[RMDB]
RNA sequence: GGGAACGACUCGAGUAGAGUCGAAAAGCGUCACCAUUAAAAGGUGUCAAAUCAUAUAUGGUGGUUCCACAUACACCUUGGAGUCUGAUGGUCAGGGAAGAGUCUUAGUGGACAAAGUCAUCAGCACCUCAAAGCAGCAGUUCGCUGCUGCUUUGAGAAAAGAAACAACAACAACAAC
Reactivity to 2A3 in 0.01 (KOAc 150mM, MgCl2 10mM, bicine 150mM(pH8.5), 24C), signal-to-noise 3, nucleotides 027 to 126: g060c030g070u050c010a000c000c040a000u090u260a090a120a030a040g000g020u020g020u050c050a040a090a060u050c050a050u160a050u030a040u170g080g000u040g010g020u080u040c080c010a080c010a060u250a020c040a050c030c000u050u060g140g010a050g090u090c020u000g010a020u050g050g020u140c070a020g070g010g160a130a010g080a060g010u030c020u040u160a120g020u190g070g010a040c030a000a060a010g030u010c000a000u000c010a000g000c030a070c000
Reactivity to DMS in 0.01 (KOAc 150mM, MgCl2 10mM, bicine 150mM(pH8.5), 24C), signal-to-noise 2, nucleotides 027 to 126: g010c110g000u000c000a070c020c000a050u000u020a070a050a190a030g050g020u020g000u000c190a080a100a050u000c060a140u010a180u010a100u020g000g030u000g010g030u000u010c060c010a040c280a120u050a020c150a050c050c000u000u050g000g000a060g000u020c000u000g000a010u000g010g000u000c080a050g010g000g000a060a030g000a180g000u000c030u020u000a130g060u060g060g000a040c050a070a040a120g000u000c060a040u000c040a030g000c170a100c120

Source: RMDB library OK1LIB, as collected in RNAgym. Structure probing data (2A3 and DMS) for a 177-nucleotide construct. The DMS profile rests on 1,940 reads. The reactions ran in a buffer of 150 mM KOAc, 10 mM MgCl2 and 150 mM bicine (pH 8.5), at 24 C.